[RMDB]
RNA sequence: GGGAACGACUCGAGUAGAGUCGAAAAGAGCGAUUAGACAAAGGGGUAGAGCUACAUAUUAGAUAGCUGUAUAAUCGAUCAAGUUACAUCAAAACAUCUUCAAUAUUUAUUACUUACUUUCCUUUCUGCCAGAGUACGGUAUUCGUACCGUACUCAAGCCAGAGAAAAGAUUCGUCUUUUCUCUGGCAAAAGAAACAACAACAACAAC
Reactivity to DMS in 0.01 (KOAc 150mM, MgCl2 10mM, bicine 150mM(pH8.5), 24C), signal-to-noise 1, nucleotides 027 to 156: g020a080g000c010g010a080u000u000a080g010a110c050a040a110a000g000g020g040g000u010a060g000a070g040c030u020a050c070a180u010a170u010u010a200g000a120u000a030g010c030u000g030u010a090u000a080a020u010c100g000a050u010c140a090a090g010u000u000a050c050a090u000c010a080a070a080a130c020a030u000c010u000u000c020a030a080u010a040u000u000u010a010u030u010a120c010u010u000a060c030u000u000u000c010c010u000u000u010c080u010g000c030c110a140g030a000g030u000a000c000g030g010u000a020u010u000c300g050u000a010c010c010g060u000a010c000u000c010a000a080
Reactivity to 2A3 in 0.01 (KOAc 150mM, MgCl2 10mM, bicine 150mM(pH8.5), 24C), signal-to-noise 5, nucleotides 027 to 156: g030a000g010c010g010a030u020u060a050g040a090c080a040a100a050g020g000g010g060u060a020g030a010g060c010u020a030c020a080u250a130u150u120a080g120a250u010a010g020c010u000g030u040a070u030a080a070u060c040g030a020u050c020a040a000g020u050u120a070c040a080u120c060a030a110a090a070c030a080u060c080u210u130c080a100a090u080a190u180u120u120a160u120u110a060c020u040u020a030c010u040u060u150c020c000u040u080u080c040u020g070c040c020a060g000a000g000u000a000c000g000g000u010a000u010u030c040g020u020a000c000c000g000u010a000c000u000c000a000a000